[RMDB]
RNA sequence: GGGAACGACUCGAGUAGAGUCGAAAAAUGAGAAGGAUAAGGCAGUGGCCCGUAAGUUAGAACGUAUGGCUGAUCAGGCUAUGACUUCUAUGUAUAAGCAAGCACGUGCUGAAGACAAGAAAGCAAACAAUCGCGGUGUUCGCACCGCGAAAAAGAAACAACAACAACAAC
Reactivity to DMS in 0.01 (KOAc 150mM, MgCl2 10mM, bicine 150mM(pH8.5), 24C), signal-to-noise 2, nucleotides 027 to 129: a170u080g000a100g030a000a000g030g030a000u000a010a060g000g080c120a050g000u010g000g000c000c000c000g000u020a030a090g020u010u020a050g000a050a030c000g000u130a070u050g010g000c010u070g000a240u090c300a090g000g020c050u000a010u020g010a120c020u000u000c020u010a080u030g050u020a030u000a060a110g020c100a020a130g020c060a070c080g060u020g080c050u040g010a110a080g020a090c160a070a030g000a020a080a010g070c070a010a040a070c150a080a060
Reactivity to 2A3 in 0.01 (KOAc 150mM, MgCl2 10mM, bicine 150mM(pH8.5), 24C), signal-to-noise 2, nucleotides 027 to 129: a000u190g000a010g000a010a000g000g080a070u010a130a040g040g000c000a000g030u030g000g050c000c010c000g020u060a040a040g000u000u010a010g010a100a010c060g000u000a000u100g060g000c000u040g030a300u220c060a020g000g030c000u000a000u100g010a000c000u000u060c000u000a000u030g040u080a080u010a180a010g130c050a090a000g000c000a000c070g030u030g000c000u000g000a030a000g090a000c000a000a000g050a000a010a030g030c050a000a020a020c170a000a000